Chemical mapping of a 177-nucleotide RNA with 2A3 and DMS. Conditions: 150 mM KOAc, 10 mM MgCl2 and 150 mM bicine (pH 8.5), 24 C.
RNA sequence: GGGAACGACUCGAGUAGAGUCGAAAAGAUAUGGAGCGAUCGGGAGCUUUAGUACCAUCGGAAACGAUGGGACCGAGCUUUGAUCGAGUCGCUCCUAAGUCAAAACAUAGGUGUUCGCACCUAUGAACCAUCCUACCUAGUUCGCUAGGUAGGAUGGAAAAGAAACAACAACAACAAC
Reactivity to 2A3 in 0.01 (KOAc 150mM, MgCl2 10mM, bicine 150mM(pH8.5), 24C), signal-to-noise 3, nucleotides 027 to 126: g030a000u060a020u160g010g000a020g020c000g000a000u010c000g000g030g020a010g020c000u110u140u120a020g020u020a020c000c000a000u000c000g020g030a030a050a030c010g010a000u010g010g000g010a000c010c020g030a010g000c000u280u220u080g100a120u120c010g000a020g120u050c000g010c000u000c000c000u000a050a010g010u000c030a020a020a080a110c010a000u010a000g000g020u020g060u080u090c300g030c110a000c000c000u000a010u000g000a010a010
Reactivity to DMS in 0.01 (KOAc 150mM, MgCl2 10mM, bicine 150mM(pH8.5), 24C), signal-to-noise 4, nucleotides 027 to 126: g000a030u000a290u000g000g000a010g030c000g010a060u000c000g000g000g000a020g000c000u010u000u000a050g010u000a110c000c000a000u000c000g030g010a110a070a100c000g000a010u000g000g010g000a040c160c190g000a020g010c000u000u000u000g000a020u000c010g010a030g020u000c000g010c000u000c000c000u000a010a050g000u000c030a090a100a110a220c010a020u010a000g000g030u000g010u010u010c220g010c000a020c000c000u000a010u000g010a080a180